Background
The record gives the reactivity of an RNA of 177 nucleotides to 2A3 and DMS.

RNA sequence: GGGAACGACUCGAGUAGAGUCGAAAAGAUGACUGACAACACGCAGAGUGAUGUCUAGGCGAGAUGUAACUUCAAUGUCUCAAGGCAUGUGAAGCACGAUAGUGGCCUUCAUUGCGUGAAUGUCAGAGAUAGGUGUGGAGUUCGCUCCAUAUCUAUCAAAAGAAACAACAACAACAAC
Reactivity to 2A3 in 0.01 (KOAc 150mM, MgCl2 10mM, bicine 150mM(pH8.5), 24C), signal-to-noise 9, nucleotides 027 to 126: g150a070u230g060a050c000u000g000a000c000a040a010c000a010c000g000c030a020g080a050g240u150g070a080u060g040u030c070u040a040g060g070c060g030a090g010a080u130g070u150a090a070c010u040u030c030a030a030u040g020u000c020u050c200a130a170g010g000c020a020u050g040u030g300a000a000g030c040a010c050g060a060u100a190g140u140g130g030c010c000u010u020c010a040u030u070g000c000g000u010g030a160a100u050g000u000c000a000g020a000
Reactivity to DMS in 0.01 (KOAc 150mM, MgCl2 10mM, bicine 150mM(pH8.5), 24C), signal-to-noise 9, nucleotides 027 to 126: g010a120u030g010a220c000u010g010a010c000a030a290c000a010c000g010c010a050g010a150g030u030g010a040u010g010u010c060u010a060g010g020c180g010a080g010a050u020g010u010a110a140c110u010u010c090a050a030u010g000u000c000u010c170a110a090g000g000c000a010u010g010u020g010a010a010g010c120a050c050g010a110u040a070g010u010g000g010c100c010u000u000c020a050u020u010g000c000g010u000g010a080a070u010g000u000c000a000g010a080
Reactivities are given for positions 27 through 126. The data come from the RNA Mapping Database (RMDB), library OK1LIB. For 2A3, 180,328 sequencing reads were counted. The reactions ran in a buffer of 150 mM KOAc, 10 mM MgCl2 and 150 mM bicine (pH 8.5), at 24 C.